Notes: Chemical mapping of a 177-nucleotide RNA with DMS.
[RMDB]
RNA sequence: GGGAACGACUCGAGUAGAGUCGAAAAGUUGUAAGAACCAUGUUCUAGGCCUCAUUCUACCCGCAAAAGCUCUCAGAACAGUGCAAAGGGGGAAAUGUGAAUGCAUUUGCUCACAACCUUCUAGGUGUGCUGUGGAUUUUUUCGAAAAUCCACAGCAAAAAGAAACAACAACAACAAC
Reactivity to DMS in 0.01 (KOAc 150mM, MgCl2 10mM, bicine 150mM(pH8.5), 24C), signal-to-noise 1, nucleotides 027 to 126: g030u010u000g030u030a060a140g050a040a100c030c100a180u000g000u000u000c010u000a150g010g010c050c000u000c030a100u030u000c290u030a100c020c000c090g010c230a030a060a110a170g030c030u000c100u010c020a080g000a050a040c020a030g040u010g000c070a030a020a160g030g020g000g010g010a040a080a030u000g000u020g000a050a070u020g020c060a240u000u010u000g040c000u000c030a010c030a130a130c000c000u000u010c040u030a060g000g020u000g020
The RNA was probed in 150 mM KOAc, 10 mM MgCl2 and 150 mM bicine (pH 8.5) at 24 C.